[RMDB]
RNA sequence: GGGAACGACUCGAGUAGAGUCGAAAAUGUGUCCUAGGGAAUUGGAAGGUCAUCCUUCACAGGAUCAUGUGGAAGUCCUGCUCGGGGCGGAAGCAUUAAAACCAUUCGAGCUAGUCAAUGCGUGGCGUUACCUCCAGGUUCUUCGGAACCUGGAGAAGAAAUCCAGUAGAUUCGUCUACUGGAUUUCAAAAGAAACAACAACAACAAC
Reactivity to DMS in 0.01 (KOAc 150mM, MgCl2 10mM, bicine 150mM(pH8.5), 24C), signal-to-noise 1, nucleotides 027 to 156: u000g010u020g010u000c010c000u000a090g000g000g010a110a160u000u000g010g040a090a060g010g000u000c110a160u000c000c020u010u000c070a160c100a040g030g000a100u010c070a100u000g000u030g010g000a300a180g030u000c010c020u010g030c120u000c110g000g030g070g010c000g000g030a150a250g000c060a070u000u000a030a070a120a110c050c020a090u010u000c040g030a080g030c030u010a120g000u000c070a090a090u010g010c070g040u000g000g030c010g050u000u010a110c100c000u000c000c010a000g010g000u010u000c020u000u000c300g020g020a030a010c010c000u000g000g000a030g000a000a040
Reactivity to 2A3 in 0.01 (KOAc 150mM, MgCl2 10mM, bicine 150mM(pH8.5), 24C), signal-to-noise 2, nucleotides 027 to 156: u140g050u000g000u000c030c020u050a140g030g040g040a100a140u170u150g060g010a110a040g040g060u180c060a050u120c030c000u040u110c060a040c000a030g030g010a030u070c030a000u120g020u000g000g020a000a030g000u040c000c020u050g060c120u030c130g010g000g000g030c000g000g000a020a000g000c010a000u040u230a040a120a000a090c030c010a030u080u060c040g040a020g030c060u040a010g070u060c050a110a070u170g010c060g050u030g080g000c010g040u080u060a060c010c010u000c000c000a000g000g000u000u000c010u010u100c140g090g010a000a000c020c030u000g000g010a000g000a000a020